The record gives the reactivity of an RNA of 177 nucleotides to 2A3 and DMS. Source: RMDB library OK1LIB, as collected in RNAgym. Conditions: 150 mM KOAc, 10 mM MgCl2 and 150 mM bicine (pH 8.5), 24 C. DMS adducts were read by reverse transcription with MarathonRT. Values cover nucleotides 27 to 126. For 2A3 the reverse transcriptase was SuperScript II with manganese.
RNA sequence: GGGAACGACUCGAGUAGAGUCGAAAAAGGCGCUGGCGUUACUGGCCGCCGAGCCACGGACGGCCGCGACCCUGGUGGCUGGGCAGUGGCGCUAACCCGGGUCGCCGCGAUCGACUGCGGUACCAACGCCUAAUCGGUAUUUCGAUACCGAUUAGGCAAAAGAAACAACAACAACAAC
Reactivity to 2A3 in 0.01 (KOAc 150mM, MgCl2 10mM, bicine 150mM(pH8.5), 24C), signal-to-noise 5, nucleotides 027 to 126: a000g030g000c010g000c060u010g030g020c010g030u040u080a040c030u060g150g080c040c010g020c030c010g040a040g000c000c010a030c020g060g040a030c090g030g010c050c030g070c070g060a160c010c000c000u040g030g000u070g040g000c050u120g040g020g020c010a040g030u030g030g000c000g000c010u020a060a080c010c000c000g000g020g000u060c120g000c010c000g000c000g030a150u190c110g080a080c070u140g000c000g000g000u020a030c000c020a050a030c090
Reactivity to DMS in 0.01 (KOAc 150mM, MgCl2 10mM, bicine 150mM(pH8.5), 24C), signal-to-noise 2, nucleotides 027 to 126: a100g010g020c000g000c020u020g020g010c010g000u020u000a010c080u000g000g000c000c010g050c040c020g000a060g000c020c010a080c140g000g000a050c160g000g000c030c020g020c050g000a030c070c000c040u000g040g020u010g010g010c000u070g000g050g020c040a100g010u050g000g000c030g010c020u000a090a070c020c000c020g000g020g010u010c090g040c000c010g020c030g000a080u020c220g010a080c180u050g000c000g000g000u010a030c020c010a120a120c110